An RNA of 207 nucleotides, treated with DMS and 2A3 and read out base by base. 2A3 adducts were read by reverse transcription with SuperScript II with manganese. It was measured as part of the RMDB library M2RFPK. For DMS, 2,219 sequencing reads were counted. The reactions ran in a buffer of 150 mM KOAc, 10 mM MgCl2 and 150 mM bicine (pH 8.5), at 24 C.

RNA sequence: GGGAACGACUCGAGUAGAGUCGAAAAACAUAUUACGAUAUGAUUCAGAUGGUGUCUUACUUGUUCGUACCAAGGGACAUAAUGGUUUCUUGUUUCCAACCAAAGAACAAGUGGCGAGCCUGAAUAAAAAACUGACUGCCGUUCGCGGCAGUCAGAACUUAUUAUCAAAGUUCGCUUUGAUAAUAAGAAAAGAAACAACAACAACAAC
Reactivity to DMS in 0.01 (KOAc 150mM, MgCl2 10mM, bicine 150mM(pH8.5), 24C), signal-to-noise 1, nucleotides 027 to 156: a050c010a050u030a090u010u010a070c090g010a160u000a050u000g010a160u000u000c030a100g020a180u000g000g030u000g020u010c030u000u000a050c000u000u000g010u000u010c010g020u000a150c200c000a030a230g020g010g070a030c040a070u010a090a150u010g010g010u010u010u000c090u010u000g030u000u030u000c040c030a040a180c160c050a040a080a250g030a050a030c020a010a060g010u000g020g020c040g010a280g010c020c100u010g000a070a040u010a000a130a070a080a110a140c000u000g000a030c030u000g000c000c030g120u000u010c260g030c120g000g000c010a010g020u000c000a000g010a060a070
Reactivity to 2A3 in 0.01 (KOAc 150mM, MgCl2 10mM, bicine 150mM(pH8.5), 24C), signal-to-noise 4, nucleotides 027 to 156: a000c030a020u170a030u100u180a090c100g060a040u050a030u160g050a040u060u070c030a020g090a160u110g040g070u120g060u140c040u060u080a020c000u000u000g000u000u020c010g040u050a040c000c030a000a010g010g010g000a010c010a020u250a200a170u180g140g010u000u020u010c010u010u010g030u070u090u070c040c020a080a080c040c020a150a140a010g010a000a000c000a000a000g000u000g010g010c030g020a020g030c010c000u010g040a010a010u110a050a090a050a000a030a030c000u000g010a000c000u000g010c000c000g040u070u050c300g010c010g120g000c000a000g010u000c000a000g000a000a000